[RMDB]
RNA sequence: GGGAACGACUCGAGUAGAGUCGAAAAUAUAUUUAUCAAAAUGCCAAGUAACUCUGGGUAGUCUAGUAAAGGGCCAACAACAUAACCAGAGGAAGCAGCCAGCUGUCCUAAUGUUGUUAAGGCGGCAAUUAUAUGGUGACUUCGGUCACCAUAUAAUAAAAGAAACAACAACAACAAC
Reactivity to DMS in 0.01 (KOAc 150mM, MgCl2 10mM, bicine 150mM(pH8.5), 24C), signal-to-noise 4, nucleotides 027 to 126: u020a070u050a070u020u010u020a110u050c030a060a060a070a070u030g010c030c050a130a110g010u020a060a170c020u010c020u000g000g000g000u010a070g000u000c110u000a090g000u030a060a100a110g000g020g020c010c060a080a030c110a030a050c130a050u020a120a140c040c020a040g010a040g000g010a060a050g000c040a060g020c080c080a120g010c010u000g010u000c000c000u000a080a070u010g010u000u000g000u010u000a150a070g000g000c020g020g030c080a060
Reactivity to 2A3 in 0.01 (KOAc 150mM, MgCl2 10mM, bicine 150mM(pH8.5), 24C), signal-to-noise 2, nucleotides 027 to 126: u150a010u070a030u020u120u140a300u190c030a080a050a000a000u090g040c000c000a080a020g010u040a060a050c010u000c000u040g010g040g030u150a040g020u010c020u000a070g040u190a180a180a300g050g000g030c010c030a060a070c020a100a000c030a070u110a040a090c000c020a000g000a030g050g000a020a000g080c050a000g080c000c070a060g000c020u020g100u230c010c000u070a160a060u230g000u030u000g010u000u010a030a020g000g000c000g000g000c000a000
Source information
The record gives the reactivity of an RNA of 177 nucleotides to DMS and 2A3. The 2A3 profile rests on 1,245 reads. Reactivities are given for positions 27 through 126. It was measured as part of the RMDB library OK1LIB. The RNA was probed in 150 mM KOAc, 10 mM MgCl2 and 150 mM bicine (pH 8.5) at 24 C.